[RMDB]
RNA sequence: GGGAACGACUCGAGUAGAGUCGAAAAGAAAGAUGCGGAUAUCAUUCUGGUCAUCAUCGAUGCGCAGGGCGGUUUCAAUGAAAAUGCCGAGGCGCUGCUCGAAAGCAUGAAGGAUGUUCGCCAGAAAUAUUACGGUAAAUUUCGAUUUACCGUAAUAAAAAGAAACAACAACAACAAC
Reactivity to 2A3 in 0.01 (KOAc 150mM, MgCl2 10mM, bicine 150mM(pH8.5), 24C), signal-to-noise 6, nucleotides 027 to 126: g080a010a110a010g080a070u150g000c010g010g020a010u010a000u070c010a020u060u000c010u080g110g050u120c040a070u040c010a020u020c050g030a020u080g000c010g000c020a020g060g040g010c030g040g020u020u030u060c130a200a130u180g050a030a030a020a020u050g000c010c010g010a070g020g000c020g000c040u040g040c030u020c020g040a090a060a000g020c020a020u120g010a010a010g020g010a000u000g000u000u010c010g000c010c010a030g070a010a040a000
Reactivity to DMS in 0.01 (KOAc 150mM, MgCl2 10mM, bicine 150mM(pH8.5), 24C), signal-to-noise 9, nucleotides 027 to 126: g010a120a100a100g010a110u010g020c010g010g000a030u000a030u000c030a070u000u000c010u000g010g010u010c080a090u010c140a100u000c020g010a050u010g010c010g020c020a090g010g010g010c010g000g010u000u000u000c040a140a150u020g000a030a020a040a050u000g010c010c000g010a170g010g000c010g010c010u000g010c140u000c040g000a050a100a120g010c040a070u010g010a040a050g000g010a020u000g010u000u000c030g020c010c140a140g000a070a070a100
An RNA of 177 nucleotides, treated with 2A3 and DMS and read out base by base.
Source: RMDB library OK2TST, as collected in RNAgym.
Reactivities are given for positions 27 through 126.
For DMS, 29,212 sequencing reads were counted.